[RMDB]
RNA sequence: GGGAACGACUCGAGUAGAGUCGAAAACAAGCACGACAACGCUGAGGAUGAAGGCGCCGUGGAAGCGCAGCGAGGCAAAACGUGCACCACGUGCGCCACGGAUCUUGCGGUGGUCCUUGCGCUUCCACGCUGAUCCGUAUUUCGAUACGGAUCAGCGAAAAGAAACAACAACAACAAC
Reactivity to 2A3 in 0.01 (KOAc 150mM, MgCl2 10mM, bicine 150mM(pH8.5), 24C), signal-to-noise 5, nucleotides 027 to 126: c050a020a020g080c050a040c100g100a050c050a180a020c100g000c030u110g070a040g110g030a090u110g080a080a070g060g000c020g000c030c030g000u030g000g010a080a060g010c010g000c050a050g070c040g070a100g100g080c040a020a100a060a090c040g040u050g010c020a020c040c040a010c010g090u200g010c020g000c000c030a010c010g020g020a030u040c020u070u190g050c040g050g090u040g030g020u040c000c010u030u060g000c000g000c030u020u000c010c000a010
Reactivity to DMS in 0.01 (KOAc 150mM, MgCl2 10mM, bicine 150mM(pH8.5), 24C), signal-to-noise 3, nucleotides 027 to 126: c070a120a080g030c070a120c200g020a120c050a060a110c060g010c000u020g000a170g000g030a050u010g030a140a100g000g040c040g030c050c030g000u010g000g020a060a080g000c020g000c000a060g020c170g030a110g000g030c090a040a060a060a040c030g000u030g050c020a230c080c050a040c020g000u010g010c300g000c020c130a010c050g000g000a080u030c010u010u030g040c080g010g040u070g000g020u010c030c020u020u000g020c010g000c000u000u000c000c000a130